[RMDB]
RNA sequence: GGGAACGACUCGAGUAGAGUCGAAAACGAGUUCUACGGAACUCGACCUUGCUCGUUCGCGAGCAAGGACCAACUCGUUCGCGAGUUGGAAGUUAGUGCGUUCGCGCACUAACAGCUGCUUCGGUGACGAAGCAGCAAGCAACGAUCUUCGGAUCGUUGCACGUGCGCGUGAGCGCACGAAGCCUUGCAACAGUUGGCCGAUGGGCUGGGCAAGGGGGUCUGGAGCAAUCCUGACCUCCCGGCUGCAAGGAUAACUACAUGGGCUUAGGAUUGGAUUCGUCCAAUCCAAAAGAAACAACAACAACAAC
Reactivity to DMS in 0.01 (KOAc 150mM, MgCl2 10mM, bicine 150mM(pH8.5), 24C), signal-to-noise 2, nucleotides 027 to 266: c000g000a010g010u000u000c010u000a120c140g070g000a000a010c000u000c000g010a050c010c000u010u000g000c000u010c000g010u000u020c210g010c000g010a010g000c020a000a000g010g010a250c010c000a000a010c000u000c000g010u010u010c160g000c000g020a020g000u000u000g000g000a210a040g000u000u000a040g010u000g010c030g030u000u000c140g000c000g000c000a020c000u000a020a020c070a190g000c010u000g010c000u010u000c000g020g000u010g000a110c000g030a020a010g020c020a010g020c020a050a090g020c000a010a020c000g010a020u000c010u010u040c190g010g010a000u000c000g000u000u000g030c010a020c120g040u010g020c050g070c040g080u020g000a300g080c100g100c000a000c040g000a230a230g010c040c010u000u000g000c030a060a040c030a050g000u000u010g010g000c050c020g000a040u000g010g000g020c010u000g010g010g020c040a070a050g000g000g000g000g000u010c000u000g000g010a000g000c250a110a110u000c000c000u000g000a020c010c000u020c000c000c300g000g000c010u010g050c020a040a010g010g010a100u000a060a090c190u000a020c020a040u000g010g010g000c010u010u010a200
Reactivity to 2A3 in 0.01 (KOAc 150mM, MgCl2 10mM, bicine 150mM(pH8.5), 24C), signal-to-noise 3, nucleotides 027 to 266: c010g000a000g010u000u010c010u030a050c160g080g000a000a000c000u000c000g010a010c000c000u000u010g000c000u020c010g010u050u050c270g030c010g120a000g000c000a010a000g000g000a010c010c000a000a010c000u010c000g050u060u040c300g040c010g120a010g000u000u000g020g020a040a020g030u040u040a000g000u010g020c020g020u010u040c250g040c000g020c090a000c000u000a010a010c000a030g000c000u010g000c010u000u000c000g030g070u080g030a050c010g000a000a000g000c010a000g010c010a000a000g000c000a000a000c010g010a000u010c000u050u080c170g220g000a000u000c000g000u000u000g000c000a020c020g010u030g000c020g000c060g060u110g090a130g030c020g000c010a000c000g000a010a020g020c000c020u040u070g020c090a120a060c010a120g040u080u060g080g020c000c000g050a070u100g070g010g000c020u040g020g040g030c080a110a100g030g020g010g000g010u000c020u080g010g000a020g020c040a040a110u030c010c000u010g000a010c000c000u010c000c000c040g020g000c010u040g040c000a020a020g050g030a040u100a100a060c080u150a030c020a070u100g090g020g030c000u090u170a100